[RMDB]
RNA sequence: GGGAACGACUCGAGUAGAGUCGAAAAAGCAGCGAGCCGCUGACUGAGGCCAUCCCGUUGUGGAAGCGGCCGCAGGACGGGGCCAUCAUCACCGGCUGGGAUUACCCGGCGUGCGAGGCCAUCGGUCGUAGUUUCGAUAUUUCGAUAUCGAAACUACAAAAGAAACAACAACAACAAC
Reactivity to 2A3 in 0.01 (KOAc 150mM, MgCl2 10mM, bicine 150mM(pH8.5), 24C), signal-to-noise 3, nucleotides 027 to 126: a000g050c060a010g030c010g100a040g020c010c020g100c080u030g040a060c020u040g040a050g000g000c020c010a060u040c030c010c030g140u130u190g070u240g040g030a060a030g090c020g070g000c000c000g010c020a020g020g050a010c020g030g020g030g000c020c010a120u060c000a010u070c010a020c040c050g130g000c010u030g020g000g070a150u080u250a300c000c010c000g000g020c010g000u010g010c030g000a040g010g000c020c000a070u080c030g040g050u050c050
Reactivity to DMS in 0.01 (KOAc 150mM, MgCl2 10mM, bicine 150mM(pH8.5), 24C), signal-to-noise 4, nucleotides 027 to 126: a060g010c070a050g010c020g010a150g020c050c010g010c030u000g010a240c030u000g000a060g000g010c030c020a120u010c010c000c010g020u000u010g010u020g010g000a120a050g020c100g020g020c020c000g020c010a050g000g000a120c090g010g000g000g020c040c020a050u000c060a090u000c070a070c070c100g000g020c040u000g000g010g010a280u010u010a110c010c000c010g000g000c010g030u000g000c200g000a070g000g010c010c010a050u010c030g020g020u000c110

This 177-nucleotide RNA was probed chemically with 2A3 and DMS. Reactivities are given for positions 27 through 126.